[RMDB]
RNA sequence: GGGAACGACUCGAGUAGAGUCGAAAAUGUGGCAGUUGGGCAGUUGGAAACAUUGGUUGCAAGUACUACAAACCUCAGCUGAGCCUAGCUUCAACAAUAAGAAUUUAUUGGUUCAGUGAGUGAAAAGUGACGUAAAUGAUUUCGAUCAUUUACGUCAAAAAGAAACAACAACAACAAC
Reactivity to 2A3 in 0.01 (KOAc 150mM, MgCl2 10mM, bicine 150mM(pH8.5), 24C), signal-to-noise 2, nucleotides 027 to 126: u140g000u050g040g000c000a010g030u070u070g030g030g000c000a030g010u120u120g050g040a060a070a000c030a100u070u140g050g010u000u030g010c050a060a010g070u000a040c030u000a030c050a050a080a030c000c000u040c010a100g040c020u010g010a010g000c010c010u040a050g000c020u030u040c000a100a060c050a060a090u170a170a000g010a020a010u040u090u060a140u140u100g000g000u010u000c000a000g020u010g040a020g030u100g070a020a060a000a080g130
Reactivity to DMS in 0.01 (KOAc 150mM, MgCl2 10mM, bicine 150mM(pH8.5), 24C), signal-to-noise 7, nucleotides 027 to 126: u010g030u000g010g000c040a030g010u010u000g010g020g020c040a040g020u000u000g010g010a120a060a080c100a100u000u010g010g010u010u010g020c070a060a080g010u010a070c070u010a060c120a060a080a150c120c010u000c020a060g020c010u010g000a020g010c010c010u000a120g010c150u000u000c050a070a090c180a070a090u020a070a100g010a040a070u000u010u000a120u020u010g000g010u000u000c010a010g010u000g000a020g010u010g000a050a060a090a120g020
The record gives the reactivity of an RNA of 177 nucleotides to 2A3 and DMS. The 2A3 profile rests on 2,132 reads. 2A3 adducts were read by reverse transcription with SuperScript II with manganese. 2A3 is a SHAPE reagent: it acylates the 2'-hydroxyl of flexible nucleotides of all four kinds. The reactions ran in a buffer of 150 mM KOAc, 10 mM MgCl2 and 150 mM bicine (pH 8.5), at 24 C. For DMS, 8,238 sequencing reads were counted.